[RMDB]
RNA sequence: GGGAACGACUCGAGUAGAGUCGAAAAUAUUUCUGAUUUUCUCUAUGUGUGGUGCUAUUCCUUUGAUUUCAAUGACUUGACCAUUCUUUGAGAUAACUGGGUUCUUACACAUGAUUAGCAAAUGAUAAUCCACGUCAUCAUUCGUGAUGACGUGGAUAAAAGAAACAACAACAACAAC
Reactivity to DMS in 0.01 (KOAc 150mM, MgCl2 10mM, bicine 150mM(pH8.5), 24C), signal-to-noise 1, nucleotides 027 to 126: u040a080u000u000u030c000u000g000a110u000u000u010u000c070u000c090u000a000u020g000u000g050u010g030g000u000g010c120u010a070u060u020c080c050u000u030u020g000a060u000u000u000c030a020a050u000g020a040c100u010u010g010a020c080c090a050u000u000c020u000u060u000g000a020g050a010u020a060a020c020u000g000g010g040u000u000c030u000u060a050c070a080c020a000u000g000a000u030u020a010g000c200a020a040a010u020g010a070u010a090
Reactivity to 2A3 in 0.01 (KOAc 150mM, MgCl2 10mM, bicine 150mM(pH8.5), 24C), signal-to-noise 4, nucleotides 027 to 126: u140a050u020u070u070c010u040g080a060u030u030u110u070c100u000c050u040a060u040g060u000g030u040g050g030u060g050c110u120a050u190u250c000c000u050u070u100g090a090u010u080u070c020a030a010u030g040a060c070u060u240g100a060c000c020a020u050u030c020u050u060u020g050a050g000a020u080a110a060c050u020g000g040g000u050u090c000u090u100a020c010a000c000a010u080g010a130u120u150a020g080c060a070a080a120u110g050a080u190a150

Source information: The data come from the RNA Mapping Database (RMDB), library OK1LIB. The record gives the reactivity of an RNA of 177 nucleotides to DMS and 2A3. For DMS the reverse transcriptase was MarathonRT. The DMS profile rests on 1,750 reads. The 2A3 profile rests on 1,714 reads. In probing experiments dimethyl sulfate is read out at A N1 and C N3, which are open when not base-paired.